[RMDB]
RNA sequence: GGGAACGACUCGAGUAGAGUCGAAAAGAUAUGGACAUGGGACAUGGUGCGGGUCGGAAACGACCCUGAAUACCAACAGCCCAGUCCUAAGUCAAAACCGACUUGAUUGUUCGCAAUCAAGUCGGAAGUACAAACACUAGUUCGCUAGUGUUUGUACAAAAGAAACAACAACAACAAC
Reactivity to DMS in 0.01 (KOAc 150mM, MgCl2 10mM, bicine 150mM(pH8.5), 24C), signal-to-noise 5, nucleotides 027 to 126: g020a040u000a300u000g000g000a010c000a100u000g010g010g000a070c060a160u000g010g010u010g010c100g000g000g010u000c000g010g010a060a070a190c000g020a000c000c000c000u000g010a050a110u000a010c010c010a040a060c260a150g010c000c000c000a020g000u000c000c000u000a020a070g000u000c030a080a060a140a190c000c000g010a010c000u000u000g000a020u000u000g010u010u010c220g020c000a010a010u000c000a010a000g000u000c000g000g000a000a020
Reactivity to 2A3 in 0.01 (KOAc 150mM, MgCl2 10mM, bicine 150mM(pH8.5), 24C), signal-to-noise 4, nucleotides 027 to 126: g020a030u060a040u100g010g010a020c290a300u010g010g000g030a030c070a180u070g000g020u030g010c040g000g000g000u020c000g000g020a080a040a030c010g000a010c010c010c010u020g020a010a020u120a040c000c010a030a070c050a080g060c020c000c000a000g000u000c000c000u010a070a030g030u020c020a000a020a050a200c000c000g000a000c000u010u000g000a000u020u010g050u100u130c300g010c130a000a010u000c000a010a010g000u010c000g000g000a000a010
Structure probing data (DMS and 2A3) for a 177-nucleotide construct. DMS adducts were read by reverse transcription with MarathonRT. The data come from the RNA Mapping Database (RMDB), library TTRDEL. DMS (dimethyl sulfate) methylates the pairing face of unpaired adenines and cytosines.